[RMDB]
RNA sequence: GGGAACGACUCGAGUAGAGUCGAAAAAGGAGCGUGAGUAUCAUCUUCGCCUGUCUUGAGCGCAUGCACUGGUUAACGCUUCCAAGGGUCCAUGGCAUGAGUAUGUAUUGCUCCUGAUUGACGGGUACCGUAUCGCGUGUUUCGACACGCGAUACGGAAAAGAAACAACAACAACAAC
Reactivity to DMS in 0.01 (KOAc 150mM, MgCl2 10mM, bicine 150mM(pH8.5), 24C), signal-to-noise 2, nucleotides 027 to 126: a100g020g000a010g060c020g020u020g040a250g030u010a050u010c040a060u000c030u000u010c180g000c020c000u010g010u010c030u020u000g000a070g000c030g000c070a080u010g010c030a090c130u020g010g020u010u020a070a050c020g000c010u010u000c100c080a070a020g030g000g010u010c100c010a030u010g040g010c020a060u000g000a030g010u010a100u010g020u000a090u020u010g030c000u000c000c060u030g010a100u000u000g000a100c070g010g000g020u030a270
Reactivity to 2A3 in 0.01 (KOAc 150mM, MgCl2 10mM, bicine 150mM(pH8.5), 24C), signal-to-noise 2, nucleotides 027 to 126: a000g000g000a000g000c010g060u050g060a070g020u080a050u180c070a030u040c040u150u050c070g000c010c020u030g060u080c040u030u070g020a050g000c060g010c010a030u110g050c050a040c110u010g000g060u030u120a100a020c010g020c040u070u070c070c050a020a090g120g000g000u040c020c040a040u120g020g000c010a000u020g010a040g110u190a050u200g110u040a040u050u110g000c010u000c020c000u110g040a200u080u070g050a040c050g080g000g010u020a140